[RMDB]
An RNA of 207 nucleotides, treated with 2A3 and read out base by base. For 2A3 the reverse transcriptase was SuperScript II with manganese. Conditions: 150 mM KOAc, 10 mM MgCl2 and 150 mM bicine (pH 8.5), 24 C.
RNA sequence: GGGAACGACUCGAGUAGAGUCGAAAACAUUUGUGACCUACAACAUUUGAUAACGGUCAUUUUAGUAGGAUAUACUCUACCAGAGCCCACUUGUAGAGCGAAUUUAAGGGCUUAGCUUAGUGUGUCUUGAUCAUCAGGCUACACCAAAGUGAAUUAAGUUGCUGAGUCAGUUCGCUGACUCAGCAACAAAAGAAACAACAACAACAAC
Reactivity to 2A3 in 0.01 (KOAc 150mM, MgCl2 10mM, bicine 150mM(pH8.5), 24C), signal-to-noise 1, nucleotides 027 to 156: c010a060u040u060u300g070u070g050a040c010c000u010a000c000a010a000c000a070u000u060u130g090a090u160a300a130c200g080g060u090c120a060u080u070u000u160a000g000u000a000g030g000a000u000a010u000a040c000u010c000u040a000c000c020a000g000a000g020c000c000c000a050c000u000u030g000u000a000g000a000g000c000g040a030a000u160u160u160a130a090g000g000g000c010u130u300a000g000c000u030u050a130g020u010g000u010g010u050c030u060u110g050a030u060c130a080u120c000a040g010g010c020u070a000c000a000c000c030a050a000a000g040u010g010a000a000u080u030a150a020